[RMDB]
RNA sequence: GGGAACGACUCGAGUAGAGUCGAAAAGAAUAUAAGAGCGUUUUCGCGUCUUGACGUGAAUGAGCCUAGACUGUAGGCUCUAGUGGGAUAGUAACGCUCACUCACAAAACGCUAUUCCACAUGAAGACGGGUCCAGUAGUUUCGACUACUGGACCCGAAAAGAAACAACAACAACAAC
Reactivity to 2A3 in 0.01 (KOAc 150mM, MgCl2 10mM, bicine 150mM(pH8.5), 24C), signal-to-noise 1, nucleotides 027 to 126: g030a040a010u180a000u070a190a050g030a000g000c000g000u030u030u030u030c000g020c020g030u030c040u070u180g000a000c000g000u010g030a020a160u130g040a000g000c000c000u000a080g040a300c130u110g120u190a030g040g000c000u100c000u000a000g000u000g000g000g000a030u020a000g050u030a040a000c000g090c000u040c000a050c000u040c040a080c070a000a120a060a040c090g020c020u000a000u000u000c000c000a000c000a030u100g110a060a040g150a040
Structure probing data (2A3) for a 177-nucleotide construct.
The RNA was probed in 150 mM KOAc, 10 mM MgCl2 and 150 mM bicine (pH 8.5) at 24 C.
It was measured as part of the RMDB library OK1LIB.